[RMDB]
RNA sequence: GGGAACGACUCGAGUAGAGUCGAAAAAAAUCACCUCGGUAUGAUUAGGGUGAGACCUAGGAACCGUAGGGGUAUUCUCAACGGAAGCUUUUGCAGUGACGCCCAUGUAAGUGGGAUAUAACAACAGAUCAGUUUCGCAGUUUCGACUGCGAAACAACUUCUUUCCCUCCUUCGGGAGGGAAAGAAGAAAAGAAACAACAACAACAAC
Reactivity to 2A3 in 0.01 (KOAc 150mM, MgCl2 10mM, bicine 150mM(pH8.5), 24C), signal-to-noise 1, nucleotides 027 to 156: a000a000a000u090c030a070c020c000u000c000g030g050u190a120u300g050a050u120u080a010g020g000g020u050g130a070g040a010c000c000u000a000g010g010a070a050c030c030g000u150a060g000g000g000g000u000a050u000u050c030u000c020a050a030c030g120g000a100a000g060c020u080u050u120u250g020c150a030g040u010g030a010c090g010c000c000c000a000u030g040u140a200a120g040u020g000g000g050a020u030a050u000a150a010c080a010a000c020a080g080a130u140c000a030g000u000u000u010c000g000c000a000g000u050u000u110c150g090a000c000u010g010c000g000a000a000a000c000a000a000

This 207-nucleotide RNA was probed chemically with 2A3. The RNA was probed in 150 mM KOAc, 10 mM MgCl2 and 150 mM bicine (pH 8.5) at 24 C. 2A3 adducts were read by reverse transcription with SuperScript II with manganese.